[RMDB]
RNA sequence: GGGAACGACUCGAGUAGAGUCGAAAAGUCGGCGAUGAUUGCCGGGAGAUCAUCCACGGUUAUUGGGUUCGGUGAUGGGUUCCUGCAGGCGCGGCGGAGAGCCAUCCAGACGCCGCUAACCCAUGCGAACUCCGUACCAUUUCGAUGGUACGGAGUUAAAAGAAACAACAACAACAAC
Reactivity to DMS in 0.01 (KOAc 150mM, MgCl2 10mM, bicine 150mM(pH8.5), 24C), signal-to-noise 2, nucleotides 027 to 126: g010u010c010g010g010c060g030a110u000g000a050u010u000g010c000c040g000g000g000a070g010a080u000c140a100u000c010c070a140c010g020g000u010u000a070u010u000g010g010g010u000u000c040g010g030u010g010a100u000g000g000g000u010u000c060c030u010g000c050a080g020g030c090g010c040g000g000c030g010g000a100g030a100g030c040c040a070u000c060c070a160g010a130c030g010c010c000g000c080u010a070a120c030c000c020a050u010g000c150g000
Reactivity to 2A3 in 0.01 (KOAc 150mM, MgCl2 10mM, bicine 150mM(pH8.5), 24C), signal-to-noise 1, nucleotides 027 to 126: g110u060c010g020g070c040g060a080u100g010a040u070u090g060c010c000g000g010g010a000g010a070u140c020a000u000c040c040a120c100g020g000u120u080a090u160u200g090g000g010u060u060c020g000g100u110g050a080u020g050g060g050u050u020c030c060u020g000c030a040g010g020c000g000c070g030g020c030g030g110a130g000a010g060c000c040a000u010c020c010a050g040a050c030g010c010c000g000c010u010a020a000c000c000c000a010u060g030c020g040
Record summary
This 177-nucleotide RNA was probed chemically with DMS and 2A3. For DMS the reverse transcriptase was MarathonRT. As a SHAPE reagent, 2A3 marks flexible, mostly unpaired nucleotides at the ribose 2'-OH. The 2A3 profile rests on 991 reads. High DMS reactivity at an A or C suggests that its Watson-Crick edge is free.